[RMDB]
RNA sequence: GGGAACGACUCGAGUAGAGUCGAAAAUUGUCUGUGAUUUUCAGGAUACAUUCAGGUAGCUGCUUCCUAAUGCAUUCCCCAAAGAGUGUGCUUGUGGGCAGAGCAUGUGCUGGGGAGGAGGGCCAGCUGUGAGCGGGGGAACAGAUGACUCAGCAUAUAAUUUAAAUGGUUUCGACCAUUUAAAUUAAAAAGAAACAACAACAACAAC
Reactivity to 2A3 in 0.01 (KOAc 150mM, MgCl2 10mM, bicine 150mM(pH8.5), 24C), signal-to-noise 3, nucleotides 027 to 156: u080u030g020u000c030u010g080u030g090a110u040u020u060u150c040a040g010g040a040u060a100c020a070u050u150c040a030g000g060u040a020g010c040u060g040c010u090u090c010c000u080a100a010u080g010c020a040u040u060c010c010c010c010a040a080a020g080a040g060u100g010u020g020c020u090u060g020u120g070g020g010c020a020g010a000g040c010a010u070g040u110g070c040u060g000g020g000g010a020g020g020a040g000g020g000c010c020a020g000c030u010g010u020g040a020g030c070g000g000g000g000g010a020a020c020a050g070a020u030g070a070c040u040c050a000g010c030a030u090a030
Reactivity to DMS in 0.01 (KOAc 150mM, MgCl2 10mM, bicine 150mM(pH8.5), 24C), signal-to-noise 1, nucleotides 027 to 156: u000u000g000u000c030u010g010u000g010a100u010u000u000u000c040a120g000g020a120u000a030c040a080u000u000c090a050g020g010u000a060g040c030u000g010c040u010u010c020c000u000a040a040u010g040c010a120u000u000c010c000c010c100a030a080a140g010a090g020u000g010u000g030c040u000u000g010u000g020g030g010c060a180g000a100g010c050a060u010g010u010g020c060u000g010g010g010g010a090g020g010a130g040g000g000c020c020a050g000c020u010g000u000g020a070g020c060g030g000g030g010g010a120a130c060a090g010a120u010g000a100c030u000c010a070g060c030a110u000a180
Structure probing data (2A3 and DMS) for a 207-nucleotide construct. For DMS, 5,277 sequencing reads were counted. DMS adducts were read by reverse transcription with MarathonRT. Source: RMDB library OK3TST, as collected in RNAgym.